[RMDB]
RNA sequence: GGGAACGACUCGAGUAGAGUCGAAAAGGCAGAGGUACUCGUCCAACUCUGCCACAGUUGGUGGGUUUUUACCUUUUGCUCUUUUGAGCUCCGACUGACGUACGUCGGACGGGUAUACGUACGGAAAGGGUGUCACGUAGUUCGCUACGUGGUACCCAAAAGAAACAACAACAACAAC
Reactivity to 2A3 in 0.01 (KOAc 150mM, MgCl2 10mM, bicine 150mM(pH8.5), 24C), signal-to-noise 9, nucleotides 027 to 126: g000g000c000a000g000a000g000g020u060a030c000u000c010g000u000c000c000a000a010c000u000c000u000g000c000c000a010c010a000g020u010u020g010g010u060g020g010g030u010u020u020u110u210a040c010c000u040u050u120u100g000c010u020c010u070u160u060u280g010a000g000c010u010c000c000g020a020c010u020g010a010c020g040u110a020c020g050u030c080g020g000a010c010g000g000g000u080a090u010a020c050g030u010a010c020g010g040a060a030a030
Reactivity to DMS in 0.01 (KOAc 150mM, MgCl2 10mM, bicine 150mM(pH8.5), 24C), signal-to-noise 9, nucleotides 027 to 126: g000g020c000a000g000a010g000g000u020a040c020u010c020g000u010c010c020a080a120c010u000c020u000g000c010c020a040c060a020g000u000u000g010g010u020g000g000g010u000u030u020u020u030a040c020c010u000u010u020u020g010c010u000c000u010u020u020u030g000a020g010c010u010c040c040g000a050c090u010g010a140c060g010u020a040c100g010u010c140g000g000a020c020g010g000g000u010a060u050a030c090g010u000a030c040g000g010a080a100a110
Source information:
Structure probing data (2A3 and DMS) for a 177-nucleotide construct. DMS adducts were read by reverse transcription with MarathonRT.